[RMDB]
The record gives the reactivity of an RNA of 177 nucleotides to 2A3 and DMS. For 2A3, 2,214 sequencing reads were counted. Values cover nucleotides 27 to 126. The reactions ran in a buffer of 150 mM KOAc, 10 mM MgCl2 and 150 mM bicine (pH 8.5), at 24 C. DMS adducts were read by reverse transcription with MarathonRT.

RNA sequence: GGGAACGACUCGAGUAGAGUCGAAAACCAACCGCCUUCGGGCGGUUGGGAUCACAGUCGCGAGGAAAGUCCGGGCUGACUGUCCACGACAGAACCCGGCUUAAAUCUAUCGCUUCGGCGAUAGAAACUACAGGAUUAACUUCGGUUAAUCCUGUAGAAAAGAAACAACAACAACAAC
Reactivity to 2A3 in 0.01 (KOAc 150mM, MgCl2 10mM, bicine 150mM(pH8.5), 24C), signal-to-noise 2, nucleotides 027 to 126: c000c000a010a010c000c000g010c010c040u080u070c230g090g020g000c080g000g020u000u010g000g000g000a030u080c040a020c020a070g050u080c020g050c070g180a090g050g100a180a050a010g040u070c030c010g030g010g020c060u050g120a120c010u010g000u020c040c110a180c230g010a000c000a000g020a020a030c000c010c020g010g000c000u030u030a060a040a030u020c000u020a010u000c000g000c000u050u020c200g080g010c000g010a010u000a010g000a030a020a000
Reactivity to DMS in 0.01 (KOAc 150mM, MgCl2 10mM, bicine 150mM(pH8.5), 24C), signal-to-noise 4, nucleotides 027 to 126: c000c000a010a010c010c000g020c000c000u000u010c210g030g010g030c010g010g000u010u000g000g000g000a060u000c100a080c140a060g020u000c040g020c120g000a110g000g010a130a060a020g000u010c010c000g000g000g020c080u010g010a080c020u000g010u000c000c120a130c190g000a020c010a020g010a140a160c020c000c000g020g000c040u000u000a030a060a140u000c000u000a010u000c000g010c010u000u010c180g020g000c000g000a010u000a000g000a020a050a170